Chemical mapping of a 177-nucleotide RNA with 2A3 and DMS.
The RNA was probed in 150 mM KOAc, 10 mM MgCl2 and 150 mM bicine (pH 8.5) at 24 C.
For DMS, 76,233 sequencing reads were counted.
RNA sequence: GGGAACGACUCGAGUAGAGUCGAAAAUGACCAACUUCAAUCAGAUCAAUGAGAAGUACGGUUAUCCGGUAGGCGAUAAGCUACUGCGUGAUUUGAGUGAACAGUUUCAGGUCUUUUUGGAUCAGAAUACUAUCAUAGUAUUCGUACUAUGAUAGUAAAAAGAAACAACAACAACAAC
Reactivity to 2A3 in 0.01 (KOAc 150mM, MgCl2 10mM, bicine 150mM(pH8.5), 24C), signal-to-noise 9, nucleotides 027 to 126: u110g010a010c000c000a010a020c010u030u000c020a030a070u000c000a000g010a030u010c020a040a200u150g050a100g050a300a010g020u020a020c120g050g070u030u020a010u000c010c010g070g220u210a120g070g160c110g030a030u010a040a030g110c010u010a010c010u030g050c020g030u020g010a010u010u010u030g020a020g010u020g020a040a020c040a120g020u030u120u170c080a040g000g000u010c000u040u050u020u060u110g080g010a050u060c020a030g120a150a010
Reactivity to DMS in 0.01 (KOAc 150mM, MgCl2 10mM, bicine 150mM(pH8.5), 24C), signal-to-noise 9, nucleotides 027 to 126: u010g010a060c000c000a100a060c050u000u000c010a040a040u000c010a010g010a010u000c010a050a090u010g020a160g010a090a020g010u000a020c280g010g000u000u000a010u000c010c020g020g030u010a110g020g010c160g010a020u000a010a040g000c010u000a010c010u000g000c050g010u000g000a010u000u000u000g000a030g010u000g000a020a050c250a070g010u000u000u010c180a110g020g000u000c000u000u000u000u000u000g010g010a210u000c050a090g010a140a140